The record gives the reactivity of an RNA of 177 nucleotides to 2A3 and DMS. Conditions: 150 mM KOAc, 10 mM MgCl2 and 150 mM bicine (pH 8.5), 24 C. For DMS the reverse transcriptase was MarathonRT. For 2A3, 3,204 sequencing reads were counted. The data come from the RNA Mapping Database (RMDB), library TTRDEL.

RNA sequence: GGGAACGACUCGAGUAGAGUCGAAAAGAUAUGGACGGUGGGAGGCUCCUGCGAAGAACUUUCUCGGAAACGAGAAAGGGAGCUGGAGCUCACCGUCCUAAGUCAAAUCGAUCCUUCGGGAUCGAAAUCCUAAGGCAUACUUCGGUAUGCCUUAGGAAAAAGAAACAACAACAACAAC
Reactivity to 2A3 in 0.01 (KOAc 150mM, MgCl2 10mM, bicine 150mM(pH8.5), 24C), signal-to-noise 2, nucleotides 027 to 126: g000a010u070a010u130g000g000a010c030g020g050u050g090g300g060a110g300g060c010u000c030c000u020g010c030g120a280a060g010a040a010c010u000u010u000c000u000c000g040g020a080a120a060c000g010a010g010a000a010a000g030g000g000a000g000c010u040g000g010a010g000c020u020c020a010c000c000g000u000c000c000u010a000a000g000u000c020a010a030a120u020c000g010a000u000c020c000u000u020c260g120g010g010a000u000c010g020a060a010a000
Reactivity to DMS in 0.01 (KOAc 150mM, MgCl2 10mM, bicine 150mM(pH8.5), 24C), signal-to-noise 2, nucleotides 027 to 126: g010a050u010a300u010g000g010a000c010g010g000u010g000g000g020a160g050g000c000u000c000c010u010g020c000g000a130a100g010a160a220c010u000u000u000c000u000c010g000g020a140a090a200c000g010a010g000a000a000a000g000g020g000a050g000c000u000g000g000a010g000c000u000c010a010c020c000g000u000c010c000u000a020a080g010u000c050a050a060a170u000c010g000a000u000c000c000u000u020c180g010g000g000a010u000c010g000a000a030a070